This 207-nucleotide RNA was probed chemically with 2A3. Values are in units of 0.01, from 0 to 300, in steps of 10. The reactions ran in a buffer of 150 mM KOAc, 10 mM MgCl2 and 150 mM bicine (pH 8.5), at 24 C. For 2A3, 772 sequencing reads were counted. 2A3 adducts were read by reverse transcription with SuperScript II with manganese. The data come from the RNA Mapping Database (RMDB), library OK3TST.
RNA sequence: GGGAACGACUCGAGUAGAGUCGAAAAAUUUUCAUAGUUAGCAAACAUACGAACCAUCAUAUCAGUGUACCUCCGUAUAAGGGAUAUUGUAAACUACGAUGCAUCUAUUCAUGACACUUGUGUUCAUACCCGUCAAGAUUCUAGCCCUAUGAGCCAGACUUUCGAGUUAGUUCGCUAACUCGAAAGUAAAAGAAACAACAACAACAAC
Reactivity to 2A3 in 0.01 (KOAc 150mM, MgCl2 10mM, bicine 150mM(pH8.5), 24C), signal-to-noise 2, nucleotides 027 to 156: a010u110u110u050u050c010a010u000a090g020u070u090a040g050c060a070a120a150c050a070u090a090c080g060a040a040c050c020a050u060c040a000u030a090u200c070a030g030u040g020u050a090c000c010u060c010c070g100u170a080u030a170a060g050g040g020a010u010a050u050u100g070u100a000a100a080c020u070a030c110g060a050u070g010c020a020u000c020u120a080u090u130c080a070u070g040a060c020a020c120u050u060g030u020g030u040u060c020a020u080a130c030c000c010g040u030c050a050a000g000a030u140u000c000u120a000g000c030c000c000u040a080u060g000a010g060c010c000a020g010